RNA sequence: GGGAACGACUCGAGUAGAGUCGAAAACACUCACCAUCACGAGAACAGCAGGAGAGUAAUCAGCCCCAUGAUUCAUUACCUCCCACUGGGUCCUUCCCAUGACAUGUGGGGAUUAUGAGAGCUACAAUUCAAGAUGAGAUUUGGGUGAGGACACAGCCUAAUCCCUGGAGUUCGCUCCAGGGAUUAGAAAAGAAACAACAACAACAAC
Reactivity to 2A3 in 0.01 (KOAc 150mM, MgCl2 10mM, bicine 150mM(pH8.5), 24C), signal-to-noise 1, nucleotides 027 to 156: c090a020c010u020c000a040c000c030a050u060c050a020c090g060a050g030a150a040c040a010g070c040a040g000g140a040g030a000g050u040a020a010u030c010a030g120c010c010c000c040a010u020g030a120u140u090c080a030u120u100a160c020c000u020c000c030c060a080c050u050g030g000g000u040c000c000u050u000c020c000c020a010u020g050a020c060a100u080g000u140g000g000g000g050a000u060u060a050u090g080a000g010a010g050c010u090a080c070a040a120u050u250c020a040a070g050a140u090g010a010g040a250u070u070u130g060g010g010u040g000a010g000g000a000c010a000c020a090g010c030
Reactivity to DMS in 0.01 (KOAc 150mM, MgCl2 10mM, bicine 150mM(pH8.5), 24C), signal-to-noise 2, nucleotides 027 to 156: c050a130c060u000c030a080c000c010a110u010c050a040c080g030a240g000a080a100c030a050g010c050a030g020g010a070g040a240g000u000a060a050u010c040a120g000c000c000c000c040a070u020g010a100u000u000c070a060u000u000a050c060c040u000c020c000c030a120c060u000g020g000g000u000c020c080u010u130c000c010c000a300u000g000a060c030a100u000g020u010g050g000g030g000a070u010u000a040u000g040a140g010a110g000c030u020a130c050a060a080u000u000c050a090a140g000a070u000g000a090g000a210u030u000u000g020g050g000u020g040a060g010g010a140c040a040c040a080g020c090